Structure probing data (2A3 and DMS) for a 177-nucleotide construct. DMS adducts were read by reverse transcription with MarathonRT.

RNA sequence: GGGAACGACUCGAGUAGAGUCGAAAAAUAAACAUGGUUACCAAAACCAUUCCGUGAAGGUAGCCAUGAAACAGGGAAUGGUUAUAAAAGCUGAGCGUUAGGAAAAACCUAAUGCUCAGCAAAAAAAGGAUAUUGAGUAGUUCGCUACUCAAUAUCCAAAAGAAACAACAACAACAAC
Reactivity to 2A3 in 0.01 (KOAc 150mM, MgCl2 10mM, bicine 150mM(pH8.5), 24C), signal-to-noise 1, nucleotides 027 to 126: a000u200a010a100a020c000a000u010g020g000u020u010a020c020c010a130a080a060a060c020c010a020u040u000c030c000g090u080g070a100a030g060g010u010a010g020c020c000a010u000g030a020a030a010c060a020g060g000g050a000a030u020g090g030u070u050a100u100a150a070a030a040g010c000u020g020a000g000c000g000u000u000a010g000g040a010a120a070a130a160c000c000u000a000a000u000g000c010u020c010a000g000c000a000a000a000a070a000a000a000
Reactivity to DMS in 0.01 (KOAc 150mM, MgCl2 10mM, bicine 150mM(pH8.5), 24C), signal-to-noise 1, nucleotides 027 to 126: a040u010a080a030a300c020a040u000g000g000u000u000a000c000c000a150a130a110a080c020c000a040u000u000c060c040g040u000g010a130a190g000g040u000a010g000c020c010a000u010g020a040a080a070c170a030g010g020g000a030a010u000g000g000u010u020a080u010a090a020a070a060g000c000u000g000a000g010c000g020u030u000a020g010g000a120a150a020a150a110c010c000u000a000a000u000g000c000u000c000a010g030c000a000a000a040a070a000a010a050